RNA sequence: GGGAACGACUCGAGUAGAGUCGAAAAUUAACUUACGAUUUAAGGAAGGAAAUAAGGUAAGUUUUGCUAUUUGAGUUUGUCUUUGCUCUUUUAAGCAAAUAUCAAAAAGACUAGUAAUUUAUGGAUUUUGUUUGUUUUUUCAUAAAUUGCAAAACCACUAACGUUCAACGUUCGCGUUGAACGUUAGAAAAGAAACAACAACAACAAC
Reactivity to 2A3 in 0.01 (KOAc 150mM, MgCl2 10mM, bicine 150mM(pH8.5), 24C), signal-to-noise 2, nucleotides 027 to 156: u030u010a010a010c010u000u020a000c030g130a150u110u060u180a070a040g020g050a030a040g040g040a050a150a100u110a090a080g120g000u000a010a020g000u030u020u070u050g000c000u010a010u020u020u020g010a000g010u040u070u130g000u010c000u010u030u010g010c000u010c000u020u040u000u070a070a010g010c030a020a110a160u210a080u170c100a070a050a000a020a000g010a000c000u000a010g020u000a000a010u000u020u000a000u020g000g000a000u000u000u020u050g040u040u180u040g010u000u000u010u000u030u000c000a000u000a010a010a000u010u000g000c000a000a020a040a030c070c050a070